[RMDB]
RNA sequence: GGGAACGACUCGAGUAGAGUCGAAAAACAGAUUUGAAGCAAGGCAAUGAAAUAUUGAUGCCGGCAGGUUACCAGAAGAAGAACAGGCAUGCAGUGGAAGUCAAUUCAGAAGGAAGAAUAAGUGUUACUAAAGCGAUAUAUUCGUAUAUCGCUUUAGAAAAGAAACAACAACAACAAC
Reactivity to DMS in 0.01 (KOAc 150mM, MgCl2 10mM, bicine 150mM(pH8.5), 24C), signal-to-noise 9, nucleotides 027 to 126: a090c070a080g000a070u010u020u010g000a100a070g010c080a080a070g010g010c030a040a060u010g000a090a090a100u040a100u020u010g010a080u010g020c020c010g000g010c050a040g000g000u010u010a070c050c050a060g000a070a060g000a070a050g010a060a060c150a060g010g010c030a050u010g020c060a060g010u010g010g010a060a060g000u010c050a040a080u010u010c050a050g010a090a050g000g010a040a050g000a050a060u020a050a080g010u010g000u010u010a160
Reactivity to 2A3 in 0.01 (KOAc 150mM, MgCl2 10mM, bicine 150mM(pH8.5), 24C), signal-to-noise 6, nucleotides 027 to 126: a000c030a030g080a130u080u120u160g070a070a010g050c040a060a080g050g030c030a040a070u100g090a100a160a020u280a110u110u130g060a040u070g030c000c000g020g000c030a020g030g020u040u070a030c020c050a020g040a050a010g050a030a000g020a080a040c030a030g030g010c030a020u060g020c020a020g020u050g050g040a060a010g070u090c020a040a110u130u020c010a030g060a110a050g110g040a030a060g030a080a000u130a150a010g040u040g030u140u030a010